An RNA of 177 nucleotides, treated with DMS and 2A3 and read out base by base. For DMS, 765 sequencing reads were counted. Source: RMDB library OK1LIB, as collected in RNAgym. The RNA was probed in 150 mM KOAc, 10 mM MgCl2 and 150 mM bicine (pH 8.5) at 24 C. Values are in units of 0.01, from 0 to 300, in steps of 10.
[RMDB]
RNA sequence: GGGAACGACUCGAGUAGAGUCGAAAAGAAUAUAAGAGCGCAGUAAUUGUGAGAGCAAACUGCGCCCGGACUGUAGGAUCCGGUGGCACAGCAACGCUCAAUCACAAAACGCUGUGCCACGUGAAGACACGCGCCUACUGUUCGCAGUAGGCGCGUGAAAAGAAACAACAACAACAAC
Reactivity to DMS in 0.01 (KOAc 150mM, MgCl2 10mM, bicine 150mM(pH8.5), 24C), signal-to-noise 1, nucleotides 027 to 126: g000a190a070u000a140u000a170a170g020a040g000c000g000c000a000g050u000a080a090u060u000g000u000g000a300g000a140g070c080a000a110a000c000u000g000c000g000c000c000c000g000g000a010c020u000g000u040a110g000g010a180u000c000c020g000g040u000g000g000c000a000c070a000g000c000a190a200c270g000c210u060c050a090a020u060c300a060c260a030a000a110a140c300g020c000u000g000u000g000c020c010a060c000g010u060g000a130a070g000a180
Reactivity to 2A3 in 0.01 (KOAc 150mM, MgCl2 10mM, bicine 150mM(pH8.5), 24C), signal-to-noise 2, nucleotides 027 to 126: g000a040a000u070a010u010a070a010g000a040g020c000g000c000a010g000u090a170a090u050u020g000u020g000a150g000a000g140c000a000a010a020c000u000g020c000g000c000c000c000g040g030a020c070u250g070u160a100g130g040a140u000c000c000g050g000u010g000g000c010a000c000a000g030c000a140a060c070g060c000u040c040a140a170u120c040a040c060a020a160a100a060c070g000c000u010g000u000g000c000c000a010c000g070u100g100a090a000g090a000